[RMDB]
RNA sequence: GGGAACGACUCGAGUAGAGUCGAAAACGUAAAGGGCGAGCUUUUGUCCGGAAUGGUUCCGCCGUGAUCGGGCCAUGCAAUAGUUGCCAACGACAACUAUGGUCCGGUUGCUCAGGCAGCGUAACGCACAAUGGAACAACCUUCGGGUUGUUCCAAAACUUACUGGCUUGUUCGCAAGCCAGUAAGUAAAAGAAACAACAACAACAAC
Reactivity to DMS in 0.01 (KOAc 150mM, MgCl2 10mM, bicine 150mM(pH8.5), 24C), signal-to-noise 2, nucleotides 027 to 156: c090g030u010a080a130a140g050g030g030c020g010a100g020c110u000u000u000u000g000u010c010c000g000g000a170a120u010g010g030u020u000c000c010g040c030c030g010u000g030a040u000c020g020g030g000c000c020a100u000g020c210a120a160u020a040g000u020u000g010c010c010a120a170c240g010a090c000a010a020c000u010a030u000g020g050u000c010c030g000g010u000u000g000c040u000c030a080g000g020c040a070g040c040g010u020a070a160c090g000c080a070c040a070a220u000g010g020a020a050c000a020a020c000c000u000u000c300g050g030g030u000u000g010u000u030c010c000a000a020a000
Reactivity to 2A3 in 0.01 (KOAc 150mM, MgCl2 10mM, bicine 150mM(pH8.5), 24C), signal-to-noise 3, nucleotides 027 to 156: c010g010u040a000a070a000g060g010g000c060g050a100g080c100u110u130u250u140g030u010c000c010g020g050a070a050u100g110g000u010u080c030c000g000c020c040g020u020g010a010u000c000g000g010g010c000c010a030u110g020c050a070a190u060a110g000u000u000g020c030c060a160a090c150g070a140c020a000a000c000u000a000u020g000g000u000c000c000g000g000u000u010g040c010u010c120a050g000g050c020a030g040c050g050u080a030a030c040g000c020a040c040a090a170u050g000g000a000a000c000a010a000c000c000u040u050c120g060g000g000u000u000g000u020u000c000c000a010a000a000
Chemical mapping of a 207-nucleotide RNA with DMS and 2A3. The data come from the RNA Mapping Database (RMDB), library M2RFPK. For 2A3, 1,636 sequencing reads were counted.